The data come from the RNA Mapping Database (RMDB), library M2RFPK.
An RNA of 207 nucleotides, treated with 2A3 and read out base by base.
2A3 adducts were read by reverse transcription with SuperScript II with manganese.

RNA sequence: GGGAACGACUCGAGUAGAGUCGAAAAAGCGCGCAUACUACGGUAUGCGCGCAAUCAGUAAUCGGGAAUGAUGUUCUCCCCUGGGAUUCCAAAACCGCUGUUUCGCUGAUGACGUCUGCUUUUUUAAUCACCACCGUUUGGUUCGCCAAACGGUGAACCACUAGAUCAUGUUCGCAUGAUCUAGUGGAAAAGAAACAACAACAACAAC
Reactivity to 2A3 in 0.01 (KOAc 150mM, MgCl2 10mM, bicine 150mM(pH8.5), 24C), signal-to-noise 1, nucleotides 027 to 156: a000g010c010g010c010g120c010a010u010a000c020u010a010c150g180g000u000a010u010g000c010g000c000g000c000a000a000u000c010a000g050u040a090a010u070c020g020g000g070a000a080u090g090a120u130g070u050u040c020u040c010c000c000c020u020g040g020g010a120u160u070c050c000a050a050a070a070c050c000g040c030u030g040u060u050u030c080g000c040u040g040a030u020g010a030c010g030u070c040u010g050c030u070u090u030u000u080u180a120a110u060c050a030c050c000a000c000c000g000u020u000u000g050g000u010u060c250g070c040c000a000a000a000c010g000g000u000g000a010a000